RNA sequence: GGGAACGACUCGAGUAGAGUCGAAAACCUUCAUGCGAGCCAACGGCGCUCUCUUCCUCGAACACGUGAUGCCAAUUCUUUAGGAUCGCGGCAUUUUCCAUAACGACUGUACCGGCGGCCCCGACGCCGGGUGCGACGUGUUCGCACGUCGCACCCGAAAAGAAACAACAACAACAAC
Reactivity to 2A3 in 0.01 (KOAc 150mM, MgCl2 10mM, bicine 150mM(pH8.5), 24C), signal-to-noise 7, nucleotides 027 to 126: c000c000u020u080c100a090u130g050c030g040a030g040c010c030a080a070c080g040g000c040g030c010u000c010u000c000u060u040c000c010u060c030g060a090a020c050a020c100g070u060g040a050u120g140c020c010a080a110u130u050c070u120u220u160a090g030g010a030u050c040g000c020g110g010c020a040u040u030u070u030c040c040a070u080a160a050c040g040a040c030u070g030u090a050c020c000g020g000c000g020g010c020c000c000c000g070a060c040g030c040
Reactivity to DMS in 0.01 (KOAc 150mM, MgCl2 10mM, bicine 150mM(pH8.5), 24C), signal-to-noise 2, nucleotides 027 to 126: c000c000u000u040c150a050u050g000c100g000a070g000c040c080a050a180c100g040g000c090g000c010u000c010u000c030u000u000c000c010u000c030g000a070a050c220a050c030g000u040g000a030u030g010c000c020a070a110u000u010c090u030u050u030a300g010g020a040u020c030g010c050g000g000c050a030u010u000u100u000c040c080a130u040a120a120c040g000a020c070u000g000u010a060c030c000g000g020c010g000g000c030c040c010c030g010a100c080g050c070
This 177-nucleotide RNA was probed chemically with 2A3 and DMS.
The 2A3 profile rests on 6,227 reads.
The reactions ran in a buffer of 150 mM KOAc, 10 mM MgCl2 and 150 mM bicine (pH 8.5), at 24 C.
For 2A3 the reverse transcriptase was SuperScript II with manganese.